[RMDB]
RNA sequence: GGGAACGACUCGAGUAGAGUCGAAAAAAAAGAUAUGGACCCAGAACUACGAGGAACCCGCUCAACAGCGCUUCUCGGAAACGAGAAGCGACAUGAGCGUUAGUACUCGCUGGGUCCUAAGUCAAAACAUAAUAACUUGGUUCGCCAAGUUAUUAUGAAAAGAAACAACAACAACAAC
Reactivity to 2A3 in 0.01 (KOAc 150mM, MgCl2 10mM, bicine 150mM(pH8.5), 24C), signal-to-noise 3, nucleotides 027 to 126: a000a000a000a000g030a030u060a020u110g000g000a000c000c010c000a000g000a150a110c300u300a040c090g000a000g000g030a010a000c020c010c000g010c000u000c020a070a200c070a240g100c010g000c010u000u030c010u020c010g030g000a100a070a030c010g000a000g010a020a000g010c000g030a010c000a040u060g000a000g000c010g000u000u000a000g010u010a010c000u010c000g010c010u000g010g010g000u030c000c000u000a020a010g000u000c010a010a000a080a090
Reactivity to DMS in 0.01 (KOAc 150mM, MgCl2 10mM, bicine 150mM(pH8.5), 24C), signal-to-noise 5, nucleotides 027 to 126: a080a070a080a080g010a040u000a300u010g000g010a010c000c000c000a010g000a160a080c140u020a300c030g010a010g000g000a150a130c250c300c000g000c000u000c000a030a060c300a200g000c010g010c000u000u010c000u000c000g000g000a040a090a130c000g010a010g000a010a000g010c000g020a020c080a070u000g000a010g010c000g020u000u000a020g000u000a130c000u000c000g010c000u000g010g000g000u010c000c000u010a000a080g020u000c020a110a090a150a200

This 177-nucleotide RNA was probed chemically with 2A3 and DMS. The RNA was probed in 150 mM KOAc, 10 mM MgCl2 and 150 mM bicine (pH 8.5) at 24 C. For 2A3, 8,561 sequencing reads were counted.